[RMDB]
RNA sequence: GGGAACGACUCGAGUAGAGUCGAAAAAAACAAAGGCACGCAACGCCAACACCGAAUGAACCCCUGUUGGUGCUUUAUUGUCUGGGUACGGAAGUUUUCACUCGACGGGCCGUCUGGGGCGAGAAGCCCUAAGCUGUGGGUUCGCCCACAGCUUAGGAAAAGAAACAACAACAACAAC
Reactivity to DMS in 0.01 (KOAc 150mM, MgCl2 10mM, bicine 150mM(pH8.5), 24C), signal-to-noise 4, nucleotides 027 to 126: a050a050a050c100a050a060a040g000g000c010a020c060g010c180a050a070c030g000c000c010a020a020c010a040c060c060g010a080a090u020g010a110a110c040c010c020c060u030g000u010u000g000g010u000g000c060u000u010u020a060u010u000g000u010c020u000g010g010g030u020a050c070g000g000a120a050g020u010u010u000u020c050a050c000u000c040g000a070c040g000g000g010c060c060g000u000c040u020g000g010g000g010c040g010a090g020a070a140g000c100
Reactivity to 2A3 in 0.01 (KOAc 150mM, MgCl2 10mM, bicine 150mM(pH8.5), 24C), signal-to-noise 4, nucleotides 027 to 126: a000a000a000c160a030a090a030g030g000c070a030c100g070c000a060a080c020g020c010c010a000a010c000a030c020c030g070a080a090u150g040a090a080c000c000c000c030u040g030u060u040g020g010u060g030c020u120u130u080a190u120u110g060u020c030u040g000g050g020u070a050c040g050g040a070a040g010u000u020u040u150c030a050c030u020c010g050a040c020g020g060g040c020c010g040u020c040u060g000g010g030g010c010g000a040g000a030a020g030c000